[RMDB]
RNA sequence: GGGAACGACUCGAGUAGAGUCGAAAAAAGAUAUGGACCAUAUCGCUCUUGGAUUUAUACAGCUGAGUGGUCGGAAACGACCACGAGAUGAGCUGUAUUGUCAGAGCGUAAGUGGUCCUAAGUCAAAGUAGUUAAAUACGUUCGCGUAUUUAACUACAAAAGAAACAACAACAACAAC
Reactivity to 2A3 in 0.01 (KOAc 150mM, MgCl2 10mM, bicine 150mM(pH8.5), 24C), signal-to-noise 4, nucleotides 027 to 126: a030a000g110a040u120a060u130g000g000a000c000c000a000u010a020u070c010g010c010u010c020u070u190g030g000a020u010u300u100a040u050a000c010a010g010c000u040g090a020g090u010g000g000u000c010g000g000a070a100a010c020g000a010c000c040a000c010g010a030g020a070u300g120a000g000c000u000g010u020a010u000u000g010u000c010a010g010a000g030c010g000u010a200a090g020u010g000g010u000c000c000u000a040a000g030u010c050a080a020a150
Reactivity to DMS in 0.01 (KOAc 150mM, MgCl2 10mM, bicine 150mM(pH8.5), 24C), signal-to-noise 5, nucleotides 027 to 126: a090a080g010a060u010a300u000g000g010a020c010c000a030u000a300u010c020g010c000u000c000u000u010g020g010a020u000u020u010a010u000a010c000a000g000c000u000g020a260g010u000g000g010u000c010g010g000a130a130a260c010g010a000c000c000a000c010g000a170g020a250u010g010a040g020c000u000g020u010a000u000u000g010u000c000a030g000a030g010c010g030u000a030a150g040u000g010g010u000c000c000u000a010a110g010u000c040a100a130a130

Structure probing data (2A3 and DMS) for a 177-nucleotide construct. The data come from the RNA Mapping Database (RMDB), library TTRDES. Reactivities are given for positions 27 through 126. For DMS the reverse transcriptase was MarathonRT. For 2A3, 13,729 sequencing reads were counted. Conditions: 150 mM KOAc, 10 mM MgCl2 and 150 mM bicine (pH 8.5), 24 C.